[RMDB]
An RNA of 177 nucleotides, treated with DMS and 2A3 and read out base by base. For DMS the reverse transcriptase was MarathonRT. Source: RMDB library RFMREP, as collected in RNAgym. The 2A3 profile rests on 5,419 reads. Conditions: 150 mM KOAc, 10 mM MgCl2 and 150 mM bicine (pH 8.5), 24 C.
RNA sequence: GGGAACGACUCGAGUAGAGUCGAAAAGAAUGUCAUCGCGACCGCCCCGCCGGUGUCUGGACACCCGCAGUACGUCGCAGCUUCGAUCCCGUAUCGGGUGCCUCUCAAGCCUGCCGCGCCUGGAUUACAAAGAGAUAUACUUCGGUAUAUCUCUUUGAAAAGAAACAACAACAACAAC
Reactivity to DMS in 0.01 (KOAc 150mM, MgCl2 10mM, bicine 150mM(pH8.5), 24C), signal-to-noise 6, nucleotides 027 to 126: g000a060a030u010g010u010c050a070u000c120g010c050g000a030c060c080g010c100c090c030c050g030c030c170g020g010u000g000u000c080u010g010g000a080c030a030c020c010c140g020c100a050g010u000a130c150g010u000c040g030c030a090g000c030u000u000c020g010a120u000c020c010c020g020u010a070u010c050g000g010g000u000g000c040c020u010c030u000c080a080a130g000c050c030u000g010c030c040g000c070g010c030c000u000g000g010a100u000u010a140
Reactivity to 2A3 in 0.01 (KOAc 150mM, MgCl2 10mM, bicine 150mM(pH8.5), 24C), signal-to-noise 4, nucleotides 027 to 126: g040a030a040u130g040u140c040a060u090c130g010c020g030a020c010c040g010c020c030c010c010g000c020c020g000g000u020g020u040c110u220g190g040a010c010a010c000c000c010g000c020a030g030u070a010c030g000u010c020g010c020a010g000c010u040u040c020g060a100u010c040c000c000g020u090a110u150c010g000g010g030u020g030c000c010u060c010u020c030a050a060g030c010c040u030g040c060c000g030c000g030c020c000u040g090g000a080u050u080a080